[RMDB]
RNA sequence: GGGAACGACUCGAGUAGAGUCGAAAAAGAUCCUCGGAUUGCAUAAUGCAGAGUGCACAAUCAGGCCUGUGCUCAUUAUGUGCAGUGACAUGACUGCACGAAUGAUUCCUGCAGGCAUGUCGAGGAAGCUUGUAGGGCAUUUCGAUGUUUUGCGAGCAAAAGAAACAACAACAACAAC
Reactivity to 2A3 in 0.01 (KOAc 150mM, MgCl2 10mM, bicine 150mM(pH8.5), 24C), signal-to-noise 9, nucleotides 027 to 126: a000g110a100u020c000c000u000c010g020g030a070u050u070g000c030a060u080a190a110u280g000c020a020g060a040g120u110g000c000a010c010a030a120u140c080a060g130g040c010c030u030g000u010g010c000u000c000a010u010u060a140u270g000u000g000c000a000g010u020g100a160c070a180u280g050a030c000u000g000c000a000c000g000a000a010u020g020a020u110u120c020c020u030g000c000a000g010g030c010a010u080g040u080c000g000a000g000g010a020a020
Reactivity to DMS in 0.01 (KOAc 150mM, MgCl2 10mM, bicine 150mM(pH8.5), 24C), signal-to-noise 9, nucleotides 027 to 126: a060g010a110u000c000c000u000c010g010g010a070u010u000g010c020a080u020a220a100u010g000c050a040g010a130g020u020g010c000a020c060a060a100u030c120a100g010g000c110c050u000g010u000g010c070u000c000a010u000u000a060u020g020u000g000c010a000g010u010g010a180c300a150u050g000a040c000u000g000c000a000c010g000a010a010u000g000a060u040u020c140c030u000g010c010a010g000g010c010a020u010g010u030c000g010a020g000g000a040a100
This 177-nucleotide RNA was probed chemically with 2A3 and DMS. For DMS the reverse transcriptase was MarathonRT. For 2A3, 147,816 sequencing reads were counted. Source: RMDB library OK1LIB, as collected in RNAgym. The RNA was probed in 150 mM KOAc, 10 mM MgCl2 and 150 mM bicine (pH 8.5) at 24 C. Reactivities are given for positions 27 through 126.